[RMDB]
RNA sequence: GGGAACGACUCGAGUAGAGUCGAAAAUUUUCAGGAUUUGGCGCUCUGCGAGAACCUCGAUGUCGUCGCCAAUAUUUUUCUGGGCCGCGAGAUAAGCCCUUACCGUCUCGAUGAAGUGUCAAUGGAAAAAUCAUCGACCAUUCGUGGUCGAUGAUUUAAAAGAAACAACAACAACAAC
Reactivity to DMS in 0.01 (KOAc 150mM, MgCl2 10mM, bicine 150mM(pH8.5), 24C), signal-to-noise 1, nucleotides 027 to 126: u000u010u010u010c160a100g000g010a090u000u000u010g010g020c170g020c040u010c040u020g010c140g050a130g000a150a200c150c020u000c010g000a060u010g010u000c020g030u010c070g010c010c010a090a100u000a060u000u000u030u000u000c100u010g010g010g000c040c050g000c010g010a050g000a060u000a140a130g000c050c020c020u010u000a040c080c110g000u000c040u000c020g010a130u000g000a120a110g010u010g000u000c010a050a070u010g010g030a050a070